[RMDB]
RNA sequence: GGGAACGACUCGAGUAGAGUCGAAAACUCGUGGUUCCUGUGGUUCACACCUGACCUCCUGAGCAGAAAAGAAAAAAGAAGGCGGCUCGGAGGAGCGCUUCAGGGAUCCCCGGGGAAACCUGGAGCGGUCCUGGAGUUAGUUCGCUAACUCCAGGACAAAAGAAACAACAACAACAAC
Reactivity to DMS in 0.01 (KOAc 150mM, MgCl2 10mM, bicine 150mM(pH8.5), 24C), signal-to-noise 1, nucleotides 027 to 126: c040u010c000g050u000g000g010u000u000c000c000u020g030u000g020g000u000u000c100a110c110a110c030c080u010g000a160c060c000u030c010c000u020g020a040g020c020a070g010a120a080a050a170g020a000a140a190a090a100a150g000a110a140g020g000c100g030g000c000u000c000g010g010a020g000g000a110g040c010g020c000u010u010c000a020g000g000g010a290u000c000c010c100c200g000g000g000g000a000a090a170c000c000u000g000g010a010g020c030g000
Reactivity to 2A3 in 0.01 (KOAc 150mM, MgCl2 10mM, bicine 150mM(pH8.5), 24C), signal-to-noise 2, nucleotides 027 to 126: c010u040c040g000u070g070g020u000u020c020c020u040g030u070g070g040u110u110c070a050c000a020c190c010u040g140a090c000c000u030c000c020u170g020a010g010c070a020g240a060a090a160a020g210a000a300a070a100a030a000g060a080a060g270g070c140g000g000c040u010c020g000g010a000g010g010a060g040c060g000c000u020u000c010a000g010g000g010a020u000c000c000c010c020g240g030g000g000a020a070a000c010c000u010g010g000a030g020c050g030
Description:
Structure probing data (DMS and 2A3) for a 177-nucleotide construct. The RNA was probed in 150 mM KOAc, 10 mM MgCl2 and 150 mM bicine (pH 8.5) at 24 C. The data come from the RNA Mapping Database (RMDB), library VIROID. Values cover nucleotides 27 to 126. 2A3 adducts were read by reverse transcription with SuperScript II with manganese.